Structure probing data (DMS and 2A3) for a 207-nucleotide construct. The reactions ran in a buffer of 150 mM KOAc, 10 mM MgCl2 and 150 mM bicine (pH 8.5), at 24 C. The 2A3 profile rests on 3,053 reads. For DMS the reverse transcriptase was MarathonRT. Source: RMDB library M2RFOK, as collected in RNAgym. Reactivities are given for positions 27 through 156.
RNA sequence: GGGAACGACUCGAGUAGAGUCGAAAAGCGGGGCUUGAAACGCGGGUUGCGCGCACGCCCGGCGAAGAAGUUCGCAUACGCGGUGUGCUGGUGCCGAAGUGUCUGCUGCAACGGCACGCUCGACACCUAGAACAUACCGUAUUCGUACGGUAUGUAAUCAGUACCAUUUGUUCGCAAAUGGUACUGAAAAAGAAACAACAACAACAAC
Reactivity to DMS in 0.01 (KOAc 150mM, MgCl2 10mM, bicine 150mM(pH8.5), 24C), signal-to-noise 2, nucleotides 027 to 156: g020c050g010g000g010g020c030u010u010g020a100a080a070c040g000c000g030g010g030u000u000g000c030g000c080g020c020a060c060g000c020c000c000g000g000c000g020a000a130g000a120a200g010u000u000c020g030c000a100u010a230c050g000c050g070g020u000g000u000g020c000u000g000g020u000g010c000c010g010a080a160g010u000g010u000c040u010g030c090u000g070c080a130a180c080g000g060c000a030c020g000c080u000c010g010a040c010a030c010c000u000a150g030a100a070c000a010u000a000c000c010g030u000a020u000u010c230g040u000a010c010g030g020u000a000u000g000u000a030a140
Reactivity to 2A3 in 0.01 (KOAc 150mM, MgCl2 10mM, bicine 150mM(pH8.5), 24C), signal-to-noise 3, nucleotides 027 to 156: g050c030g000g010g040g000c030u060u080g090a060a080a030c030g000c030g060g010g060u070u110g040c050g000c000g010c010a000c040g000c020c010c000g020g000c030g000a020a010g080a050a010g160u020u020c020g000c040a020u060a200c060g000c080g030g020u030g020u010g030c060u070g020g030u020g000c000c010g000a120a020g010u030g040u090c100u100g110c070u090g020c060a090a000c000g020g000c000a000c010g020c040u020c000g010a020c010a000c010c000u030a040g040a090a010c000a000u000a000c000c000g000u010a020u010u070c260g060u030a000c000g000g000u000a000u010g000u000a000a070